[RMDB]
Chemical mapping of a 207-nucleotide RNA with DMS and 2A3. 2A3 adducts were read by reverse transcription with SuperScript II with manganese. For 2A3, 1,562 sequencing reads were counted.

RNA sequence: GGGAACGACUCGAGUAGAGUCGAAAACUCGGCGUGCCGGGACUGGAUACCAAAGAGGUGGCUGUUGCACUGGCAUCUGUCUGUCAGAAGUUGCGCGCUUUCGGGUAUAUCAGCGCAUGGGGCUGUAAAACCAUUUCCGAGGUGAAAGCCUACCGCCCAUAACCUAGGUUUUCGAACCUAGGUUAUGAAAAGAAACAACAACAACAAC
Reactivity to DMS in 0.01 (KOAc 150mM, MgCl2 10mM, bicine 150mM(pH8.5), 24C), signal-to-noise 2, nucleotides 027 to 156: c020u010c040g000g030c040g070u000g020c070c050g020g000g010a090c040u000g010g020a300u000a050c040c010a030a220a060g010a100g020g010u000g030g050c030u000g040u020u020g000c050a260c020u000g030g050c020a050u000c080u020g040u010c180u000g000u000c010a040g020a110a300g010u010u000g020c010g000c020g050c000u000u000u000c080g000g020g040u000a030u020a110u010c040a260g050c040g050c020a100u000g010g020g040g000c010u010g010u000a040a050a090a050c010c000a130u000u000u000c000c010g060a300g000g000u000g010a160a060a070g020c020c020u000a100c060c020g010c040c050
Reactivity to 2A3 in 0.01 (KOAc 150mM, MgCl2 10mM, bicine 150mM(pH8.5), 24C), signal-to-noise 3, nucleotides 027 to 156: c000u010c010g010g000c040g050u130g050c080c100g040g010g070a130c000u020g020g020a050u060a160c020c000a000a130a060g040a020g000g030u080g070g020c100u150g090u190u130g010c020a020c050u010g000g000c000a040u090c110u230g220u070c030u040g040u010c020a020g030a120a070g130u060u100g020c030g000c000g030c000u040u050u110c110g030g000g030u050a090u010a050u160c030a020g020c000g020c140a100u160g030g000g100g000c010u020g010u040a010a010a060a180c000c000a030u050u070u020c030c030g020a030g000g000u020g030a070a040a000g000c000c000u000a030c000c000g010c000c020

About this RNA:
Conditions: 150 mM KOAc, 10 mM MgCl2 and 150 mM bicine (pH 8.5), 24 C.